[RMDB]
RNA sequence: GGGAACGACUCGAGUAGAGUCGAAAAAGUUCUAGUCCUCACCUAAGAUCAGACUUACAGGGCCCUCAAAGGAAGAGCACUUGGUUGGGCUUUGUGGUGGGGAUUAGUGUCUCAUUUUUAGUCCCAAAUUAAAAACGAGAUUUUGGGCUGUACAUCACCUCCAAAAUGGUUUCGACCAUUUUGGAGGAAAAGAAACAACAACAACAAC
Reactivity to 2A3 in 0.01 (KOAc 150mM, MgCl2 10mM, bicine 150mM(pH8.5), 24C), signal-to-noise 1, nucleotides 027 to 156: a000g050u020u010c000u000a000g000u000c000c010u060c000a000c000c010u060a070a070g040a180u300c070a110g130a300c050u100u020a050c120a020g000g010g000c000c000c000u090c040a000a030a030g000g090a120a050g050a010g230c000a050c090u010u020g030g010u130u000g000g050g000c000u000u000u010g000u000g000g000u000g030g020g050g000a000u000u000a000g000u010g020u000c010u000c020a060u080u300u160u080u210a040g090u180c020c000c000a000a010a010u130u070a100a050a050a000a000c090g020a070g000a170u020u080u110u080g000g000g010c000u060g110u070a100c040a100u120c100a050